[RMDB]
RNA sequence: GGGAACGACUCGAGUAGAGUCGAAAACUGGCUGAUGUUGAAGCGGACGUCGCAGCACGUGCUGAUGACGAAGGCUUCAUCACAUUAAAGAACAAUCUAUAUAGAUUGGUUUGGCAUGUUGAGCGUACUGUACAGAGAGGUUCGCCUCUCUGUACAGAAAAGAAACAACAACAACAAC
Reactivity to DMS in 0.01 (KOAc 150mM, MgCl2 10mM, bicine 150mM(pH8.5), 24C), signal-to-noise 2, nucleotides 027 to 126: c030u000g000g020c100u010g020a060u000g010u020u010g020a000a010g000c000g030g000a300c020g010u000c000g000c000a000g040c000a140c300g010u010g000c040u000g000a030u010g040a010c020g030a010a290g000g010c000u000u010c000a030u020c080a030c030a090u000u010a060a170a130g020a020a040c000a020a000u000c000u010a220u000a190u020a050g020a010u010u000g020g040u000u000u010g000g010c150a140u000g000u000u000g010a050g010c070g010u000a120
Reactivity to 2A3 in 0.01 (KOAc 150mM, MgCl2 10mM, bicine 150mM(pH8.5), 24C), signal-to-noise 1, nucleotides 027 to 126: c000u010g140g000c000u010g020a140u110g010u020u020g000a000a010g020c040g010g100a000c000g010u000c010g000c010a000g000c020a050c290g140u280g010c030u010g020a300u090g030a000c030g000a100a060g000g020c000u000u000c000a000u010c000a010c000a000u120u140a100a060a060g050a010a040c000a000a000u030c020u000a160u010a080u120a300g000a030u000u060g080g000u110u050u040g060g000c080a080u090g060u070u070g090a060g040c020g030u030a050